[RMDB]
RNA sequence: GGGAACGACUCGAGUAGAGUCGAAAAUCAGGCAACUUCGGUUGCCUGAAAAUAAACUCGCCUAUAGCCAGGCGAGUACCAAAGCGGCUAAAGCAAAGGAAAAAACUGCCUCGUUCGCGAGGCAGAAUCGUACAGUACACUUCGGUGUACUGUACGAAAAAGAAACAACAACAACAAC
Reactivity to DMS in 0.01 (KOAc 150mM, MgCl2 10mM, bicine 150mM(pH8.5), 24C), signal-to-noise 1, nucleotides 027 to 126: u000c000a020g010g030c000a000a000c000u000u030c240g020g000u000u000g000c000c000u000g020a000a010a070a120u000a050a160a160c000u000c000g000c000c000u020a050u000a080g000c150c080a140g020g020c000g010a000g010u020a000c020c030a060a070a090g010c210g020g000c020u010a050a100a180g020c160a040a070a150g000g020a000a070a040a070a060a120c010u000g030c000c000u000c000g020u000u040c180g010c000g030a000g010g000c000a000g000a000a040
Reactivity to 2A3 in 0.01 (KOAc 150mM, MgCl2 10mM, bicine 150mM(pH8.5), 24C), signal-to-noise 1, nucleotides 027 to 126: u020c000a000g020g000c010a000a000c010u040u070c160g120g010u000u000g020c000c000u000g000a000a040a000a000u110a010a080a000c000u020c000g030c000c000u080a080u090a100g100c030c030a020g000g010c010g000a000g020u020a010c010c010a000a080a010g130c070g060g030c040u150a210a000a000g090c090a100a090a110g120g030a170a110a020a030a000a060c000u000g010c000c000u020c000g010u080u080c230g000c000g030a000g000g000c000a010g000a010a010